[RMDB]
RNA sequence: GGGAACGACUCGAGUAGAGUCGAAAACGUCGUCCAAAUGAAGUUCGACAACGGCCAAUUUGCAAAGGGCGUUGCUGACACUCGCGGUGCCUUGGACAAACUCAAGCAGGGCUUGAACCUCGAUUCUGCUACUAAGAGUCUUGAUGGUUUGGACGCCACUAGUAACGUGGUUCGCCACGUUACUAGUAAAAGAAACAACAACAACAAC
Reactivity to 2A3 in 0.01 (KOAc 150mM, MgCl2 10mM, bicine 150mM(pH8.5), 24C), signal-to-noise 4, nucleotides 027 to 156: c050g080u060c010g000u000c030c000a040a020a000u160g040a110a030g050u090u050c030g040a070c020a040a000c030g190g010c010c010a100a170u110u120u300g100c160a190a150a210g000g000g000c000g000u010u000g000c020u020g060a010c020a010c080u040c030g020c040g080g020u030g030c000c000u010u040g030g010a050c040a060a090a040c100u080c060a030a080g020c060a120g080g100g000c000u030u090g020a050a030c000c000u010c010g040a070u090u040c020u050g050c020u040a070c030u080a160a010g010a010g020u030c030u080u070g060a100u100g050g000u010u010u020g020g000a000c040g040c020c010
Reactivity to DMS in 0.01 (KOAc 150mM, MgCl2 10mM, bicine 150mM(pH8.5), 24C), signal-to-noise 2, nucleotides 027 to 156: c100g000u010c070g000u000c010c010a050a050a100u020g010a120a130g050u020u030c040g040a000c020a010a000c000g000g000c000c010a100a240u000u010u000g050c200a110a110a210g050g020g010c000g000u000u000g000c000u010g000a110c070a040c050u000c040g020c120g030g040u010g010c020c010u010u000g000g010a210c040a040a030a050c090u010c010a100a150g030c070a150g030g020g020c040u000u000g000a080a070c010c000u000c010g010a060u010u000c020u000g010c060u000a070c130u000a080a150g000a050g040u000c010u000u000g030a100u000g020g020u000u000u010g030g020a090c020g040c020c100
Structure probing data (2A3 and DMS) for a 207-nucleotide construct. Values cover nucleotides 27 to 156. The data come from the RNA Mapping Database (RMDB), library OK3TST. DMS (dimethyl sulfate) methylates the pairing face of unpaired adenines and cytosines. 2A3 adducts were read by reverse transcription with SuperScript II with manganese. The 2A3 profile rests on 2,492 reads. The RNA was probed in 150 mM KOAc, 10 mM MgCl2 and 150 mM bicine (pH 8.5) at 24 C.